[RMDB]
RNA sequence: GGGAACGACUCGAGUAGAGUCGAAAAACAGCAGAAGUUCAGUGCUGUAACAAAGUGUAUCCCAGUGUAAUGACUUAAAUAUGUUUCAUCCUGCGAUGCCUGAAUUGUGUGACUGAUUGGGACUGCUGUGAAGGCGGGAGACUUGCUGGUGGGGUGCAUUCCGGCAUAAUUUCGAUUAUGCCGGAAUAAAAGAAACAACAACAACAAC
Reactivity to 2A3 in 0.01 (KOAc 150mM, MgCl2 10mM, bicine 150mM(pH8.5), 24C), signal-to-noise 3, nucleotides 027 to 156: a000c010a000g020c000a000g030a170a030g170u220u120c060a030g040u030g100c010u010g020u070a010a030c060a040a080a020g040u060g020u170a070u020c050c030c010a000g010u050g030u140a080a130u070g030a000c040u030u130a010a100a090u250a090u130g050u010u070u040c060a110u140c010c010u010g000c030g040a020u030g030c020c000u060g090a190a110u170u010g090u020g020u040g040a060c020u020g010a140u070u100g000g000g030a050c030u030g000c010u010g020u040g110a040a030g020g000c020g010g040g000a030g020a020c070u050u090g000c000u040g000g030u020g000g010g000g050u070g000c010
Reactivity to DMS in 0.01 (KOAc 150mM, MgCl2 10mM, bicine 150mM(pH8.5), 24C), signal-to-noise 2, nucleotides 027 to 156: a030c020a030g030c000a050g040a040a110g030u000u000c080a130g030u000g010c000u000g010u000a070a160c090a090a110a110g010u010g030u010a080u000c000c000c010a120g010u000g010u000a070a080u000g020a050c060u000u000a070a100a160u000a080u010g000u000u010u010c040a100u000c010c030u000g020c130g010a100u020g000c010c030u000g000a040a020u000u010g030u020g010u010g000a080c040u000g010a100u010u000g010g000g030a110c040u010g000c020u000g060u000g000a070a120g020g010c040g000g000g010a110g010a050c110u000u000g020c040u020g010g000u000g000g010g010g020u000g000c060